[RMDB]
RNA sequence: GGGAACGACUCGAGUAGAGUCGAAAACGAGACGGGCACCAUUCACAACCCGCACUACUACGAGUAUCACCGUCAGCGUGGAACCCUUCAGCGCAACCCGGGUGACGUGCCAUGUGGAGGUUUUCCGGACUGGCAAACCUUGGCGCGUAUGUGUCCACAUAAGGGGCAAAUUCGUUUGCCCCUUAUGAAAAGAAACAACAACAACAAC
Reactivity to DMS in 0.01 (KOAc 150mM, MgCl2 10mM, bicine 150mM(pH8.5), 24C), signal-to-noise 2, nucleotides 027 to 156: c060g020a160g030a070c060g000g030g000c020a060c050c110a110u020u010c000a120c070a110a090c000c000c020g020c020a210c070u010a070c010u000a100c050g000a110g010u000a080u030c040a080c000c020g010u000c120a120g000c030g010u000g020g000a130a080c120c010c030u020u000c040a160g000c080g000c060a120a080c070c050c030g000g000g030u010g010a060c040g030u010g010c020c010a120u000g020u010g040g000a080g000g050u010u000u010u000c000c050g050g000a110c100u000g010g040c060a060a040a030c000c010u020u000g030g000c000g000c060g010u020a040u000g050u000g020u000c000c020a250
Reactivity to 2A3 in 0.01 (KOAc 150mM, MgCl2 10mM, bicine 150mM(pH8.5), 24C), signal-to-noise 2, nucleotides 027 to 156: c090g040a020g080a040c080g050g000g010c030a040c050c030a070u150u110c070a070c050a050a100c000c000c020g030c070a050c040u110a040c040u060a040c020g000a020g010u050a030u170c050a030c040c000g050u060c070a020g040c000g080u020g070g040a060a060c020c000c030u090u110c070a020g010c040g020c020a000a060c000c000c030g020g000g000u020g060a000c000g000u010g000c000c000a040u120g050u090g140g020a020g080g000u000u000u030u040c020c000g070g170a140c140u220g030g000c000a000a020a090c000c010u020u120g000g000c000g000c000g010u000a010u040g020u010g010u000c010c010a030
Chemical mapping of a 207-nucleotide RNA with DMS and 2A3. DMS (dimethyl sulfate) methylates the pairing face of unpaired adenines and cytosines. For 2A3, 1,342 sequencing reads were counted. Conditions: 150 mM KOAc, 10 mM MgCl2 and 150 mM bicine (pH 8.5), 24 C. For 2A3 the reverse transcriptase was SuperScript II with manganese. The DMS profile rests on 3,997 reads.